[RMDB]
RNA sequence: GGGAACGACUCGAGUAGAGUCGAAAACAGGAGACUACGUGUUUGACCGGGAUGUGUACGUUCGUCGAGAGGUAAUGAGAGUGUGGUAUCUUGUGAAGCACAGGCUGGAUUUGUGGCUGGAGUCAGACUCUAAUCCGGAGUUCGCUCCGGAUUAGAGAAAAGAAACAACAACAACAAC
Reactivity to DMS in 0.01 (KOAc 150mM, MgCl2 10mM, bicine 150mM(pH8.5), 24C), signal-to-noise 3, nucleotides 027 to 126: c080a140g000g000a150g000a090c090u020a090c100g020u010g010u000u010u020g010a070c070c020g010g000g000a050u000g010u020g020u020a020c070g020u000u000c050g000u000c030g000a100g000a110g000g000u010a050a100u000g010a090g000a090g000u020g030u010g010g000u010a070u010c050u010u010g020u030g000a100a060g000c060a050c040a060g000g000c020u000g000g010a120u020u010u010g000u010g010g020c010u000g000g000a040g020u010c030a080g000a200
Reactivity to 2A3 in 0.01 (KOAc 150mM, MgCl2 10mM, bicine 150mM(pH8.5), 24C), signal-to-noise 4, nucleotides 027 to 126: c050a010g100g020a040g070a040c020u070a030c100g050u040g070u090u110u130g070a070c020c010g000g000g040a170u080g030u030g010u140a030c070g020u020u090c040g040u040c020g020a030g000a000g100g000u110a090a070u140g060a030g000a020g120u060g020u030g050g030u030a070u030c050u090u110g040u050g080a080a020g040c040a020c010a060g090g000c030u050g000g030a060u050u060u110g040u080g020g000c020u020g010g000a050g020u050c020a000g030a080

Notes: This 177-nucleotide RNA was probed chemically with DMS and 2A3. For DMS, 7,362 sequencing reads were counted. The reactions ran in a buffer of 150 mM KOAc, 10 mM MgCl2 and 150 mM bicine (pH 8.5), at 24 C.